[RMDB]
RNA sequence: GGGAACGACUCGAGUAGAGUCGAAAAGGGAUGCACCGCAGGUGAAGCUCCAAUUUCGUACCCCAUCGUCGCUCAGUCACAAUUGCUUCAUGGACCCGUUGGUGCAGGCAUUUUUGUGGCCCAAUGUACCACGAGUGGCGUUCGCGCCACUCGUGGUAAAAGAAACAACAACAACAAC
Reactivity to 2A3 in 0.01 (KOAc 150mM, MgCl2 10mM, bicine 150mM(pH8.5), 24C), signal-to-noise 2, nucleotides 027 to 126: g050g000g040a030u050g000c000a010c000c020g070c110a040g040g000u030g040a060a060g040c010u010c040c020a100a120u070u050u000c040g070u130a160c000c000c000c000a010u050c000g010u000c000g070c000u080c030a030g030u000c000a060c020a050a150u050u060g030c030u110u090c020a080u080g110g050a080c010c000c050g120u010u280g040g000u030g010c020a000g030g010c010a050u000u020u000u000u210g060u090g000g020c050c070c000a010a060u110g000u020
Chemical mapping of a 177-nucleotide RNA with 2A3. The RNA was probed in 150 mM KOAc, 10 mM MgCl2 and 150 mM bicine (pH 8.5) at 24 C. The 2A3 profile rests on 719 reads.